[RMDB]
RNA sequence: GGGAACGACUCGAGUAGAGUCGAAAAACACUGGCCACCGCGGCGAGCAUCGGCUACAUCGACACCGAGCUGGCACACGGGCAUAUCGACGGACGUAGCGCUCGGCUGUAUGGGGUGCUGACCCCGGCUGUAUUUCUGAUUUCGAUCAGAAAUACAGAAAAGAAACAACAACAACAAC
Reactivity to DMS in 0.01 (KOAc 150mM, MgCl2 10mM, bicine 150mM(pH8.5), 24C), signal-to-noise 9, nucleotides 027 to 126: a060c080a120c070u020g000g010c050c030a100c050c030g020c100g000g010c040g000a060g010c050a080u010c060g010g000c060u010a080c070a090u020c070g020a120c160a100c030c020g000a060g000c020u010g010g010c050a070c070a070c040g000g000g020c060a070u020a090u010c090g010a090c100g000g000a070c070g000u010a060g010c050g000c010u000c010g000g000c070u010g010u010a050u030g010g000g000g020u000g000c050u010g000a140c030c000c000c010g000g010
Reactivity to 2A3 in 0.01 (KOAc 150mM, MgCl2 10mM, bicine 150mM(pH8.5), 24C), signal-to-noise 9, nucleotides 027 to 126: a000c070a020c060u050g070g000c030c020a040c020c040g030c030g050g000c040g030a020g010c020a130u070c040g060g020c030u100a060c030a100u130c070g070a030c020a010c050c010g010a010g020c030u080g100g000c030a020c010a020c100g040g050g000c050a060u120a050u170c080g060a060c040g040g030a020c050g020u050a020g020c010g000c040u020c010g080g000c020u010g020u060a140u190g020g010g000g020u080g060c060u070g060a100c010c000c000c000g030g000